Chemical mapping of a 207-nucleotide RNA with DMS and 2A3. Reactivities are given for positions 27 through 156. The 2A3 profile rests on 519 reads. It was measured as part of the RMDB library M2RFPK. DMS adducts were read by reverse transcription with MarathonRT.
RNA sequence: GGGAACGACUCGAGUAGAGUCGAAAAGCACAAGACUUCGAACAUUAUAGCAGUUAGUAGUUGCCUAAACCCAUUGCAAUAUAUGUGACAGUAGAGGUCGCAAGCCUAUACUGUGCGGUGAACAUUCAAAAGGGAUGGUACUUCGGUACCAUCCCAAUCACAGGAUUACGUUCGCGUAAUCCUGUGAAAAAGAAACAACAACAACAAC
Reactivity to DMS in 0.01 (KOAc 150mM, MgCl2 10mM, bicine 150mM(pH8.5), 24C), signal-to-noise 2, nucleotides 027 to 156: g000c020a130c040a080a150g010a060c010u000u000c040g000a160a080c120a110u010u000a170u000a120g050c110a060g060u000u010a150g000u000a080g000u000u000g020c010c090u010a050a100a150c000c010c000a280u010u000g020c060a080a110u010a090u000a150u000g000u010g030a030c000a030g000u000a020g000a030g090g020u020c060g040c300a060a210g010c000c010u020a010u000a000c000u010g000u000g020c080g000g010u010g020a080a060c060a100u010u000c050a020a020a150a150g000g000g070a020u030g000g020u000a010c000u000u000c280g040g030u010a030c000c000a010u000c000c040c000a000a000
Reactivity to 2A3 in 0.01 (KOAc 150mM, MgCl2 10mM, bicine 150mM(pH8.5), 24C), signal-to-noise 1, nucleotides 027 to 156: g000c000a030c010a020a160g100a040c040u110u020c070g060a120a000c040a120u130u210a180u220a200g070c020a010g040u040u030a040g060u030a000g000u080u010g030c020c010u010a040a080a080c000c000c040a060u030u250g000c050a120a010u000a060u050a040u200g060u040g100a010c000a000g040u030a000g000a000g040g000u090c020g040c130a010a000g010c000c000u000a000u000a020c000u010g000u070g130c000g090g020u040g070a100a000c030a210u060u210c060a110a040a040a110g000g000g000a000u010g000g000u000a000c010u000u100c130g050g000u000a000c010c000a000u000c000c000c020a000a000